[RMDB]
RNA sequence: GGGAACGACUCGAGUAGAGUCGAAAACGGCUGCUGUUAGCUUUGCCGGUUUCCUUGUGACCUCAGCAACCGGGGUUACUGUCUUUGCCGCUCUAGGUUGUUAAGCGGGCCAAUUUGAGAAACCAGGCCUACCCAGGGGAUUCGUCCCCUGGGUAGGAAAAGAAACAACAACAACAAC
Reactivity to 2A3 in 0.01 (KOAc 150mM, MgCl2 10mM, bicine 150mM(pH8.5), 24C), signal-to-noise 2, nucleotides 027 to 126: c010g030g030c000u000g000c010u030g070u300u210a090g000c020u120u300u220g000c000c000g000g010u000u020u000c000c030u010u000g030u020g080a100c000c000u030c050a060g000c010a110a020c020c010g050g000g060g000u000u030a010c030u060g110u090c040u110u090u060g060c030c030g060c000u030c000u080a140g000g170u000u000g000u040u020a060a030g020c060g010g030g060c060c020a120a170u080u060u110g160a220g000a000a070a000c000c020a040g120g000
Chemical mapping of a 177-nucleotide RNA with 2A3.